[RMDB]
The record gives the reactivity of an RNA of 207 nucleotides to 2A3 and DMS. For DMS, 2,299 sequencing reads were counted. For 2A3 the reverse transcriptase was SuperScript II with manganese. As a SHAPE reagent, 2A3 marks flexible, mostly unpaired nucleotides at the ribose 2'-OH.
RNA sequence: GGGAACGACUCGAGUAGAGUCGAAAAGCAGAAAAAAAGUGAGGAGGGAAAUGCAUAGAAAUGAAUUUCAGAAAUUUCCUUUCAAAGUGAGUAGAUAGGAAAUUUGAAGGGAAGAGAGAAUACAUAUGAACACAAUCUAUUAUGAAGGAAAGCAUUACACUGCAUAGGGAUUCGUCCCUAUGCAGUGAAAAGAAACAACAACAACAAC
Reactivity to 2A3 in 0.01 (KOAc 150mM, MgCl2 10mM, bicine 150mM(pH8.5), 24C), signal-to-noise 3, nucleotides 027 to 156: g000c010a010g090a050a060a000a000a040a060a010g040u050g000a040g000g030a020g020g010g010a080a040a000u050g020c050a060u050a100g080a020a120a000u040g020a020a060u120u050u050c020a000g110a020a050a040u020u020u040c000c000u010u000u040c060a070a060a000g060u040g030a030g040u110a030g020a060u060a020g030g000a000a050a030u040u030u070g030a010a030g030g000g000a030a000g040a000g010a000g030a060a000u100a090c040a020u150a090u160g110a110a010c030a010c030a080a040u020c020u040a090u200u050a080u210g050a030a050g060g070a040a180a000g000c140a000u250u190a020
Reactivity to DMS in 0.01 (KOAc 150mM, MgCl2 10mM, bicine 150mM(pH8.5), 24C), signal-to-noise 1, nucleotides 027 to 156: g010c030a100g000a000a000a060a120a110a130a170g050u000g060a040g070g020a110g000g000g050a050a060a080u020g000c060a110u000a050g000a040a080a070u000g000a070a080u000u000u020c040a100g000a030a050a090u000u000u000c000c000u040u000u020c020a070a060a170g020u010g010a100g050u010a120g000a080u000a050g000g000a050a010a060u020u000u000g000a050a060g010g000g030a060a020g010a130g000a100g000a060a060u000a080c050a030u030a140u000g000a060a110c080a080c090a050a110u000c050u000a130u000u000a070u000g000a060a130g000g000a030a040a100g000c010a050u000u000a170